[RMDB]
RNA sequence: GGGAACGACUCGAGUAGAGUCGAAAAGAUAUGGACCAUGAACGGGAGCUGGUCGGAAACGAUUCAGCAUCGAUCGUUAUGGUCCUAAGUCAAAAUCCGUUAAUCUGGUUCGCCAGAUUAACGGAAAUCUCAUGGUAGGGUUCGCCCUACCAUGAGAAAAAGAAACAACAACAACAAC
Reactivity to DMS in 0.01 (KOAc 150mM, MgCl2 10mM, bicine 150mM(pH8.5), 24C), signal-to-noise 2, nucleotides 027 to 126: g000a060u000a300u000g000g000a010c010c000a000u020g020a050a040c000g020g000g010a040g010c020u000g000g000u000c000g000g000a080a100a140c000g000a020u010u030c000a000g000c010a140u000c060g000a110u030c010g000u000u000a030u000g020g000u000c000c000u020a000a050g000u010c040a130a100a140a140u000c000c000g010u000u000a000a010u000c000u010g010g000u010u010c300g020c010c000a000g030a000u000u000a000a000c000g000g000a000a010a030
Reactivity to 2A3 in 0.01 (KOAc 150mM, MgCl2 10mM, bicine 150mM(pH8.5), 24C), signal-to-noise 2, nucleotides 027 to 126: g000a000u050a000u100g000g010a000c020c000a020u100g250a030a020c000g070g050g030a010g010c000u010g030g030u020c000g040g050a040a020a000c010g020a010u300u300c030a010g030c040a100u260c060g070a190u110c010g010u010u020a000u000g000g000u000c000c000u010a000a000g020u020c020a030a010a000a280u020c010c000g000u000u000a000a000u000c000u010g010g010u080u100c250g080c050c010a000g000a010u010u010a010a000c000g000g000a030a010a010

The record gives the reactivity of an RNA of 177 nucleotides to DMS and 2A3. The DMS profile rests on 1,567 reads. In probing experiments dimethyl sulfate is read out at A N1 and C N3, which are open when not base-paired. For 2A3 the reverse transcriptase was SuperScript II with manganese.